[RMDB]
RNA sequence: GGGAACGACUCGAGUAGAGUCGAAAAUGUAAUCCCGAGCUCAUGAGUUCGAGGCUACAGUCCGAUGGCAGUGGCGUUGCCGUCUCGAACCUAGCCGUUACACCCUUGUGCAUUGUGGGAGGAGCUAUCGGGUAAUACCGUUCGCGGUAUUACCCGAAAAAGAAACAACAACAACAAC
Reactivity to 2A3 in 0.01 (KOAc 150mM, MgCl2 10mM, bicine 150mM(pH8.5), 24C), signal-to-noise 2, nucleotides 027 to 126: u140g030u020a000a080u000c010c020c020g020a040g010c020u120c010a100u100g030a060g070u080u020c020g030a060g000g070c050u070a030c080a060g060u100c010c030g120a090u110g130g000c070a030g050u110g060g020c040g140u170u100g000c020c030g030u040c020u000c020g020a020a020c010c000u000a010g070c000c020g020u040u060a030c050a040c030c040c030u060u110g100u070g070c040a060u070u120g060u140g070g050g000a030g060g020a000g070c010u120a060
Reactivity to DMS in 0.01 (KOAc 150mM, MgCl2 10mM, bicine 150mM(pH8.5), 24C), signal-to-noise 3, nucleotides 027 to 126: u000g010u000a070a080u000c040c040c010g000a080g010c050u000c070a110u010g010a100g030u000u000c030g000a080g000g000c030u000a060c200a060g010u000c050c060g030a040u010g000g010c010a060g010u020g010g000c100g030u000u010g000c010c040g010u000c040u000c020g000a060a070c090c150u000a070g000c000c020g000u000u000a080c110a130c050c030c060u000u000g000u000g000c050a110u010u000g040u000g010g020g010a110g010g000a080g000c050u010a110